[RMDB]
Source: RMDB library OK3TST, as collected in RNAgym.
Chemical mapping of a 207-nucleotide RNA with 2A3 and DMS.

RNA sequence: GGGAACGACUCGAGUAGAGUCGAAAAGUUGCUCAUCCAUGCGCUGCGCUCAGGCUUGACAGGCAGGCGUACGACCUUGUCGUUCUCUCCGGCGCGCACUCCCAAGCGGCUAAGAUCGUCACAGCGCAGGUCCAUCUGCGAGAAGUCGACCGCGCGCGACAGAGAUUAACUUCGGUUAAUCUCUGUCAAAAGAAACAACAACAACAAC
Reactivity to 2A3 in 0.01 (KOAc 150mM, MgCl2 10mM, bicine 150mM(pH8.5), 24C), signal-to-noise 3, nucleotides 027 to 156: g160u130u160g020c030u040c040a100u050c070c040a080u120g020c010g000c030u070g000c000g030c050u090c110a120g110g030c060u120u070g080a060c030a020g030g000c020a020g000g030c050g000u080a080c090g090a090c010c040u050u070g000u010c020g020u100u020c010u000c010u010c040c040g030g010c010g000c000g000c030a030c040u040c010c010c020a030a030g030c050g050g040c030u080a070a060g040a220u070c040g070u050c030a040c040a120g030c020g000c030a030g000g000u010c050c040a110u080c030u030g000c030g050a080g010a100a020g030u060c040g000a050c040c030g000c010g000c000g010c000
Reactivity to DMS in 0.01 (KOAc 150mM, MgCl2 10mM, bicine 150mM(pH8.5), 24C), signal-to-noise 2, nucleotides 027 to 156: g020u010u010g000c010u030c050a200u000c030c040a080u010g030c030g050c010u010g000c040g020c100u040c060a230g020g020c030u030u000g040a100c070a120g040g030c040a190g020g010c000g060u010a010c040g000a000c070c000u000u020g000u000c010g000u000u000c000u000c000u000c100c030g000g050c010g050c020g000c040a070c050u010c010c000c060a150a160g030c050g010g020c000u000a090a070g020a070u000c060g010u010c030a090c030a110g030c000g000c020a050g020g000u020c160c090a080u010c010u020g060c000g020a190g010a110a080g030u000c000g010a060c000c030g010c040g030c030g030c000
DMS adducts were read by reverse transcription with MarathonRT. 2A3 adducts were read by reverse transcription with SuperScript II with manganese.